[RMDB]
RNA sequence: GGGAACGACUCGAGUAGAGUCGAAAAAUCAGCCUUCGUUCUGUAAACGGGGUUGGAUCCGACUCUCAUAGGCUCUCCAACCCAACUCCUACUCAAUACGUCCUCGUCGUACAGAACGGUAACACGUAAAACGAAGGCUGCUUCGGCAGCCUUCGAAUCCACAUUACAUGUUCGCAUGUAAUGUGGAAAAAGAAACAACAACAACAAC
Reactivity to DMS in 0.01 (KOAc 150mM, MgCl2 10mM, bicine 150mM(pH8.5), 24C), signal-to-noise 1, nucleotides 027 to 156: a130u010c080a090g000c010c050u010u000c000g040u000u000c020u030g040u010a090a080a050c050g000g000g000g020u000u010g050g000a030u000c010c000g020a060c040u020c110u000c120a200u000a100g020g000c040u000c100u000c030c020a040a040c030c000c000a060a050c030u000c030c010u000a070c050u000c050a140a120u000a080c090g030u000c010c010u000c010g040u000c030g000u000a120c060a060g000a030a020c030g030g000u000a040a140c000a050c060g020u000a030a080a090a190c020g000a030a010g000g000c020u000g000c000u000u000c250g040g030c000a020g010c010c000u000u000c000g000a000a060
Reactivity to 2A3 in 0.01 (KOAc 150mM, MgCl2 10mM, bicine 150mM(pH8.5), 24C), signal-to-noise 3, nucleotides 027 to 156: a010u090c030a040g040c020c000u120u100c040g000u000u000c000u010g040u070a050a060a150c090g010g000g000g010u010u010g010g020a100u300c000c010g100a090c040u070c030u040c150a100u140a180g000g000c010u020c000u000c030c000a020a020c030c000c020a020a010c020u020c010c020u070a100c030u040c100a050a180u070a210c080g080u090c010c060u060c020g120u020c000g030u020a020c010a010g000a030a010c020g000g000u070a070a020c070a020c080g120u110a070a040a080a000c020g000a000a000g010g000c010u000g000c000u010u000c020g090g000c000a000g020c000c000u010u000c000g000a000a010

Conditions: 150 mM KOAc, 10 mM MgCl2 and 150 mM bicine (pH 8.5), 24 C. This 207-nucleotide RNA was probed chemically with DMS and 2A3. For DMS the reverse transcriptase was MarathonRT. For DMS, 2,900 sequencing reads were counted. For 2A3 the reverse transcriptase was SuperScript II with manganese.